RNA sequence: GGGAACGACUCGAGUAGAGUCGAAAAAUGAUUCGUAGUGUAAGACGAUCGACAGUCAUCGCUUGCCAGCAGGACCACCAAAGGAAUACGCUUCGGUAACUACUCGAGAUCGCAAGCGAUAAAACAAUCGCUCAAUUAGGUUCGCCUAAUUGAGCGAAAAAGAAACAACAACAACAAC
Reactivity to DMS in 0.01 (KOAc 150mM, MgCl2 10mM, bicine 150mM(pH8.5), 24C), signal-to-noise 1, nucleotides 027 to 126: a070u000g000a070u000u020c010g000u000a030g040u020g020u060a160a060g020a020c020g000a050u000c010g040a090c160a120g000u000c080a090u000c080g000c020u000u010g000c030c080a110g050c100a040g000g000a100c110c090a020c090c090a030a120a090g000g000a170a060u030a040c110g060c060u000u000c000g000g000u020a000a140c020u000a000c000u000c050g000a010g000a110u010c040g000c050a030a120g020c000g010a050u010a000a100a070a050c190a130a090
Reactivity to 2A3 in 0.01 (KOAc 150mM, MgCl2 10mM, bicine 150mM(pH8.5), 24C), signal-to-noise 1, nucleotides 027 to 126: a000u080g000a020u100u000c000g000u040a090g090u080g010u200a070a000g130a110c060g040a000u030c030g110a070c100a060g020u090c080a010u010c010g000c000u010u050g010c020c030a030g120c000a010g070g030a060c010c010a030c000c020a070a070a040g090g010a030a060u050a090c000g000c040u000u020c010g000g000u040a150a100c000u010a000c000u000c010g020a020g030a170u110c000g000c000a030a000g000c010g060a050u070a010a110a030a000c040a030a100